The record gives the reactivity of an RNA of 207 nucleotides to 2A3. The data come from the RNA Mapping Database (RMDB), library OK3TST. High 2A3 reactivity points to a flexible backbone, as in loops and unpaired stretches. Values cover nucleotides 27 to 156. For 2A3, 676 sequencing reads were counted. Conditions: 150 mM KOAc, 10 mM MgCl2 and 150 mM bicine (pH 8.5), 24 C.

[RMDB]
RNA sequence: GGGAACGACUCGAGUAGAGUCGAAAAUCGAUUCGGUCGCAGGGAUGGCGAGUAUGAAUAAAAAACAGCCAAACGAUUCAGCGACCUAUUGACGCAAUCGCGCUGACCGGGUAACGUGAACCACGUAGACACAAGAGGCGGUAAACAUCCGCAAGUCCUUCAUGUGCACAUUCGUGUGCACAUGAAGAAAAGAAACAACAACAACAAC
Reactivity to 2A3 in 0.01 (KOAc 150mM, MgCl2 10mM, bicine 150mM(pH8.5), 24C), signal-to-noise 2, nucleotides 027 to 156: u080c000g010a000u070u050c030g030g010u010c000g000c120a100g000g120g000a110u100g050g080c130g040a090g130u170a190u220g120a270a120u300a180a050a000a000a000a000c070a020g000c020c000a040a040a000c050g050a080u090u170c060a000g000c000g010a000c000c010u020a070u030u040g020a020c040g010c030a030a140u130c060g000c020g010c070u030g060a040c040c000g000g000g010u040a110a010c010g030u020g100a040a070c060c000a070c070g030u080a010g100a050c030a030c060a210a090g140a050g210g040c000g000g020u020a080a100a090c030a090u050c010c000g020c010a070a030g030u060c000